This 177-nucleotide RNA was probed chemically with DMS. It was measured as part of the RMDB library OK2TST. The reactions ran in a buffer of 150 mM KOAc, 10 mM MgCl2 and 150 mM bicine (pH 8.5), at 24 C.
RNA sequence: GGGAACGACUCGAGUAGAGUCGAAAAUUCAUCUGGACCAGCUUCUGGAGUUGCUCAGGCAGACGCCGGACGGCUUCACGACCCGGCGCUGGCAAGUCGGGGUCCUACUGGCCGAUGACGGUGUGCACACCGGACGGCUAUUCGUAGCCGUCCGGUGAAAAGAAACAACAACAACAAC
Reactivity to DMS in 0.01 (KOAc 150mM, MgCl2 10mM, bicine 150mM(pH8.5), 24C), signal-to-noise 1, nucleotides 027 to 126: u000u020c050a120u000c040u010g020g000a130c030c000a070g000c100u000u020c080u000g010g000a050g000u000u010g000c070u010c010a030g010g000c070a070g020a150c120g000c030c000g000g010a050c030g010g000c030u000u020c130a050c180g000a060c050c000c000g010g000c000g000c050u000g000g040c130a040a110g000u000c060g010g040g000g010u020c050c090u010a090c140u000g000g000c000c000g000a050u000g000a090c160g000g020u000g000u000g030c160a230